[RMDB]
RNA sequence: GGGAACGACUCGAGUAGAGUCGAAAAACGGAAAGCGUCCGGUGUGUGAUGUACGUCGUAAUUCAUCGUCGUGUCAGCGCCGAUUCCGAGUGCGCCCGCCUCAGCAAACGCGUCUUGAUUCGCGCCCAGGUAUACAAAAGUCCAGCCAUCACUGGUCCGAGGGACUUAAGUUCGCUUAAGUCCCUCGAAAAGAAACAACAACAACAAC
Reactivity to 2A3 in 0.01 (KOAc 150mM, MgCl2 10mM, bicine 150mM(pH8.5), 24C), signal-to-noise 2, nucleotides 027 to 156: a000c000g000g000a100a110a000g030c020g030u000c000c010g020g000u020g010u010g020u020g000a100u030g050u140a040c020g020u020c010g020u050a160a220u150u120c110a100u170c060g030u000c000g000u010g070u070c020a010g000c000g010c010c000g010a010u130u010c000c000g030a020g110u060g000c050g000c000c000c000g030c000c010u050c040a020g000c050a160a130a050c040g010c000g030u000c080u150u170g030a160u110u070c010g000c010g010c060c000c010a030g060g000u070a090u040a130c000a020a120a030a010g030u060c050c000a010g030c020c050a060u020c030a050c070u050g000g020u110c120